[RMDB]
RNA sequence: GGGAACGACUCGAGUAGAGUCGAAAACUUUGAGUAAGUGAAAUGAAGCGUGAAUAACUGCCUAAUUAGUGGACAUGAAAACUGGACAGUCUCCAAAGUCAUCAGAGAUGACCACGCUUGCCAGGCAACUUACUAGACUAAGGGUGACGUGCCCAUACCGAUGGGCAUAGUUCGCUAUGCCCAUCGGAAAAGAAACAACAACAACAAC
Reactivity to 2A3 in 0.01 (KOAc 150mM, MgCl2 10mM, bicine 150mM(pH8.5), 24C), signal-to-noise 2, nucleotides 027 to 156: c000u020u070u220g030a000g000u010a030a010g000u000g040a000a040a050u030g020a020a000g000c010g010u010g000a020a000u010a060a010c020u000g000c000c050u170a290a280u220u180a090g120u120g030g010a050c030a090u080g030a040a000a000a000c000u000g000g030a010c020a070g130u090c020u000c060c010a000a000a020g020u000c000a030u000c000a040g070a010g010a230u040g000a010c000c000a000c000g000c010u010u040g160c100c000a000g040g090c010a000a050c010u020u000a010c000u000a030g130a090c110u080a020a140g030g050g020u060g090a140c170g100u190g090c040c000c000a000u110a050
An RNA of 207 nucleotides, treated with 2A3 and read out base by base.
The 2A3 profile rests on 669 reads.
The RNA was probed in 150 mM KOAc, 10 mM MgCl2 and 150 mM bicine (pH 8.5) at 24 C.